Chemical mapping of a 177-nucleotide RNA with DMS and 2A3. 2A3 is a SHAPE reagent: it acylates the 2'-hydroxyl of flexible nucleotides of all four kinds. For DMS the reverse transcriptase was MarathonRT. Values cover nucleotides 27 to 126. The DMS profile rests on 3,665 reads. Source: RMDB library OK2TST, as collected in RNAgym. The RNA was probed in 150 mM KOAc, 10 mM MgCl2 and 150 mM bicine (pH 8.5) at 24 C.

[RMDB]
RNA sequence: GGGAACGACUCGAGUAGAGUCGAAAAGCAGCGCGGUGUACGCAGCCUCGUCGACGGUCAGCAUCACGAACGGUUCCGGCGCGACGUCGGCGAACGUCACGCUCUCGCGCCUGAGCAACGGGUGGUACGAGGGAUAGGAUUUCGAUCCUAUCCCUCGAAAAGAAACAACAACAACAAC
Reactivity to DMS in 0.01 (KOAc 150mM, MgCl2 10mM, bicine 150mM(pH8.5), 24C), signal-to-noise 3, nucleotides 027 to 126: g020c070a120g020c030g020c040g000g000u010g010u010a060c090g020c090a190g020c030c040u010c030g020u000c010g010a040c020g010g010u000c070a130g040c060a050u010c040a140c100g000a080a120c110g020g000u000u000c030c060g000g010c050g020c030g000a010c040g000u010c060g010g000c010g000a010a050c090g000u000c060a070c050g010c030u010c040u000c020g000c000g020c040c030u010g000a080g000c020a090a090c050g000g000g010u000g010g000u010a140
Reactivity to 2A3 in 0.01 (KOAc 150mM, MgCl2 10mM, bicine 150mM(pH8.5), 24C), signal-to-noise 3, nucleotides 027 to 126: g100c060a010g010c000g010c020g050g070u070g010u120a030c080g000c070a030g010c000c000u010c030g030u010c020g020a050c050g040g120u070c020a060g000c020a030u030c020a040c190g090a280a050c060g100g010u110u070c040c000g000g010c000g000c010g000a000c050g040u040c050g000g000c020g010a040a010c020g060u060c030a010c100g000c010u010c000u010c010g000c010g040c000c020u010g040a020g040c040a080a060c040g100g000g040u090g030g000u040a040